RNA sequence: GGGAACGACUCGAGUAGAGUCGAAAACGUCUGUUCGCAGACGCCAAGGAUAUGGAGGGUGUUUUAGUCUUGGAUUUAUUCGUAACAUCCAUCGGAAACGAUGGUGGAAUUGUCAGACUGGACACCCUCCUAAGUCGAUAUGAGGAUUCGUCCUCAAUAUUACCUUUUCGUUCGCGAAAAGGUAAUAAAAAGAAACAACAACAACAAC
Reactivity to DMS in 0.01 (KOAc 150mM, MgCl2 10mM, bicine 150mM(pH8.5), 24C), signal-to-noise 2, nucleotides 027 to 156: c000g020u000c000u010g010u000u000c270g050c030a000g000a030c000g030c020c070a080a140g000g000a090u000a240u000g010g010a030g020g040g030u000g010u000u000u000u010a030g030u000c010u000u000g030g020a050u000u030u000a030u000u000c030g040u000a080a030c040a160u000c000c000a010u000c020g000g010a170a090a240c010g010a010u010g000g020u000g010g000a020a020u000u000g010u000c020a090g000a040c010u000g000g000a020c010a020c000c000c000u000c000c000u000a000a050g020u000c020g020a130u000a120u010g010a020g040g000a100u000u000c120g010u000c000c000u010c010a010a110
Reactivity to 2A3 in 0.01 (KOAc 150mM, MgCl2 10mM, bicine 150mM(pH8.5), 24C), signal-to-noise 4, nucleotides 027 to 156: c020g000u000c000u010g080u080u070c300g000c140a000g000a000c000g030c040c030a110a060g130g000a040u040a030u130g030g000a020g000g000g000u040g050u010u010u060u300a010g000u020c050u070u190g060g020a040u200u230u110a010u040u030c010g020u030a060a030c060a300u190c030c000a000u000c000g000g030a070a080a090c030g000a000u000g010g000u010g000g000a000a010u000u000g020u020c010a000g000a000c000u000g000g010a000c010a000c000c000c000u010c000c000u000a000a000g000u000c000g030a050u030a030u230g010a000g010g010a030u050u070c180g100u040c060c000u000c000a000a010